The data come from the RNA Mapping Database (RMDB), library TTRINS. The record gives the reactivity of an RNA of 177 nucleotides to DMS. The DMS profile rests on 18,479 reads. DMS adducts were read by reverse transcription with MarathonRT.

[RMDB]
RNA sequence: GGGAACGACUCGAGUAGAGUCGAAAAGAUAUGGAGGUUACCUCCUGACUCAGAGGUGGGAGCUCCCACUCGGAAACGAGUGUGAGAGCAUCGAUCACCCUGAGUCAGGAGGUAACCUCCUAAGUCACACAUAGGAUAAGUUCGCUUAUCCUAUGUGAAAAGAAACAACAACAACAAC
Reactivity to DMS in 0.01 (KOAc 150mM, MgCl2 10mM, bicine 150mM(pH8.5), 24C), signal-to-noise 7, nucleotides 027 to 126: g010a050u000a300u010g000g010a010g010g010u000u000a010c000c000u000c000c000u000g000a010c010u000c000a010g000a180g040g020u000g000g000g010a050g020c000u000c000c000c010a010c000u000c010g000g000a130a140a230c010g000a020g010u000g000u010g020a190g020a010g010c000a130u000c160g000a100u020c010a010c000c010c000u000g000a030g000u000c010a010g000g000a010g000g000u000a000a000c010c000u000c000c000u000a000a050g010u010c040a300